[RMDB]
RNA sequence: GGGAACGACUCGAGUAGAGUCGAAAAGCUGGAUGUCCGCCCAGGUGGCGCGACACAUGGCGUGCUGCUGCUGAACAGCCACGGCAUGGACAUUGUGCUGACUCAGACCCAGGUCAGCUACCGGGUGCGUAAUCCCCAUCUUCGGAUGGGGAUUACGAAAAGAAACAACAACAACAAC
Reactivity to 2A3 in 0.01 (KOAc 150mM, MgCl2 10mM, bicine 150mM(pH8.5), 24C), signal-to-noise 1, nucleotides 027 to 126: g090c070u100g120g030a080u090g030u070c020c020g040c000c020c030a120g200g100u200g060g000c010g030c090g060a000c000a000c000a040u050g050g100c000g010u000g040c060u020g000c010u010g010c060u130g030a190a070c020a030g040c030c000a000c010g080g100c010a020u010g010g000a060c020a090u080u200g080u100g010c010u000g000a020c000u010c120a070g030a270c060c000c010a010g020g020u010c030a010g000c000u010a010c010c010g060g010g000u120g000
Reactivity to DMS in 0.01 (KOAc 150mM, MgCl2 10mM, bicine 150mM(pH8.5), 24C), signal-to-noise 2, nucleotides 027 to 126: g000c100u000g010g030a140u010g000u000c030c010g040c030c020c040a190g010g020u000g010g010c030g050c100g000a100c040a090c040a020u000g030g020c000g010u000g000c130u020g020c000u000g020c070u000g030a090a300c080a020g010c040c040a020c020g000g000c000a040u000g020g000a130c150a030u000u000g060u000g000c000u020g000a020c010u000c100a120g010a170c010c030c020a250g020g000u000c040a020g060c000u010a030c050c060g000g000g040u020g010
The record gives the reactivity of an RNA of 177 nucleotides to 2A3 and DMS. The 2A3 profile rests on 1,046 reads. 2A3 adducts were read by reverse transcription with SuperScript II with manganese. The reactions ran in a buffer of 150 mM KOAc, 10 mM MgCl2 and 150 mM bicine (pH 8.5), at 24 C. Values cover nucleotides 27 to 126. It was measured as part of the RMDB library OK2TST.